[RMDB]
Structure probing data (2A3) for a 207-nucleotide construct.
The RNA was probed in 150 mM KOAc, 10 mM MgCl2 and 150 mM bicine (pH 8.5) at 24 C.
The 2A3 profile rests on 517 reads.
RNA sequence: GGGAACGACUCGAGUAGAGUCGAAAAAAUGCAGGUAGUACUAGUUGCAGAUUCUGCAAUUUCUUUUGUAUCCGCAACAAUUGUAUUCAUGACUAUAUUAUUUAAAUCAAGAACAGCAAAUAAACUCAUAUUUCCUCCUAGUAAUAAAUAAGAACACGUUGAUCGUUACAUUCGUGUAACGAUCAACAAAAGAAACAACAACAACAAC
Reactivity to 2A3 in 0.01 (KOAc 150mM, MgCl2 10mM, bicine 150mM(pH8.5), 24C), signal-to-noise 1, nucleotides 027 to 156: a010a000u050g000c030a030g060g020u120a030g060u010a100c020u010a040g020u000u000g020c020a010g040a240u230u090c020u050g000c000a040a040u000u060u190c000u000u110u010u020g040u020a010u000c030c030g000c020a000a000c050a130a130u090u030g030u030a020u030u090c040a050u080g050a000c000u020a090u020a100u300u060a130u030u230u110a070a110a020u140c020a050a010g040a080a060c030a020g070c010a000a070a070u090a200a040a010c040u020c010a020u090a100u130u080u000c000c000u000c020c000u000a070g060u070a070a140u110a020a180a040u180a080a090g010a050a020c060a010c070